[RMDB]
RNA sequence: GGGAACGACUCGAGUAGAGUCGAAAACAAAGGGCUGACUGUGUGCCACUUUCAGGAACAGCAAUUUGGAAGAAAGCCAGGCAUGCCUGAGGUCUUUGAUGAACAAGGAAUACUUGUUUCCUUUGCCCACAAGUACUGUUUUCGAACAGUACUUGUGAAAAGAAACAACAACAACAAC
Reactivity to 2A3 in 0.01 (KOAc 150mM, MgCl2 10mM, bicine 150mM(pH8.5), 24C), signal-to-noise 9, nucleotides 027 to 126: c020a010a030a010g050g050g020c020u030g010a060c010u010g010u010g010u010g050c010c010a030c000u020u010u010c030a070g140g140a160a130c020a050g150c070a120a280u140u180u180g070g030a080a060g010a050a070a010g030c130c090a030g010g000c010a000u030g010c000c010u040g020a030g000g030u000c000u020u020u030g110a150u070g010a020a010c020a030a010g040g020a150a060u090a290c020u030u040g010u010u030u030c020c000u050u050u120g060c010c020
Reactivity to DMS in 0.01 (KOAc 150mM, MgCl2 10mM, bicine 150mM(pH8.5), 24C), signal-to-noise 9, nucleotides 027 to 126: c050a040a040a040g010g010g010c010u000g000a300c200u000g000u000g030u000g000c020c030a150c010u010u000u000c000a090g000g020a130a200c100a080g010c250a090a090u010u020u000g010g020a160a150g000a010a020a040g010c090c130a090g000g000c000a010u000g000c020c050u000g000a300g000g000u000c010u000u000u000g000a100u010g010a070a050c050a020a010g000g000a130a070u030a120c110u000u000g000u000u000u010c030c020u000u010u010g010c160c070

The record gives the reactivity of an RNA of 177 nucleotides to 2A3 and DMS.
2A3 adducts were read by reverse transcription with SuperScript II with manganese.
The RNA was probed in 150 mM KOAc, 10 mM MgCl2 and 150 mM bicine (pH 8.5) at 24 C.
It was measured as part of the RMDB libraries RFM100 and RFMREP.